RNA sequence: GGGAACGACUCGAGUAGAGUCGAAAAGAGUGUACAACCUAGAUUCCCCACAUGUGCAGUUCACAAUAGGGUUCGCUCCACUGAGAAUCUAAUGCUGCCACUGAUCUGAUCUGAUAGGAGGCAGAGCCCAAGGAUCAGAGUUCGCUCUGAUCCUUGGAAAAGAAACAACAACAACAAC
Reactivity to 2A3 in 0.01 (KOAc 150mM, MgCl2 10mM, bicine 150mM(pH8.5), 24C), signal-to-noise 2, nucleotides 027 to 126: g040a030g000u110g040u070a120c080a090a050c080c030u050a090g020a210u030u010c030c000c030c000a050c000a080u070g010u000g000c060a080g080u090u140c040a020c010a050a070u050a110g020g010g000u020u040c020g000c010u070c010c030a090c090u100g020a050g070a180a030u010c040u050a120a040u170g040c010u010g000c000c020a010c030u040g030a050u000c010u030g030a120u030c000u030g000a030u000a040g020g020a030g040g000c020a010g000a040g080c020
Reactivity to DMS in 0.01 (KOAc 150mM, MgCl2 10mM, bicine 150mM(pH8.5), 24C), signal-to-noise 4, nucleotides 027 to 126: g000a060g010u010g010u000a100c110a120a090c070c050u000a080g000a150u000u000c020c020c010c150a090c160a050u010g020u000g000c070a050g030u020u000c060a050c080a070a120u000a160g010g000g000u010u000c110g000c030u010c030c080a070c090u000g010a090g000a080a060u000c040u010a060a080u010g010c000u000g010c020c010a090c030u000g000a040u000c010u000g000a080u010c140u000g010a070u010a100g010g000a070g020g010c020a030g020a080g020c140